RNA sequence: GGGAACGACUCGAGUAGAGUCGAAAAUGUCAGAAACCACACAAAUUCUAUAUGAUUACCUCGUCUUUGGCAACAAAUUAUAUCAGAAACCUGGAGGAGUAACAUCAGGUAAUAGCCGUACUGCAGAUGGAAAUUCGUUUCUACAUCUAUUGAUCGAGUGUGAACACACAUUCGUGUGUGUUCACACAAAAGAAACAACAACAACAAC
Reactivity to 2A3 in 0.01 (KOAc 150mM, MgCl2 10mM, bicine 150mM(pH8.5), 24C), signal-to-noise 1, nucleotides 027 to 156: u090g010u030c040a010g110a090a090a050c040c000a040c030a000c020a070a200a030u200u010c110u060a220u040a100u210g010a040u030u080a060c000c000u060c080g100u060c150u030u040u070g030g000c020a030a020c000a030a170a040u170u030a300u120a060u300c030a040g040a050a060a000c000c010u000g040g000a010g050g040a030g030u040a110a040c010a010u080c000a000g010g030u010a030a130u060a130g030c070c030g050u120a060c060u080g030c000a000g000a080u070g000g040a030a080a160u250u090c030g040u060u000u010c000u000a000c000a090u010c030u120a160u080u300g090a080u110c050g020a050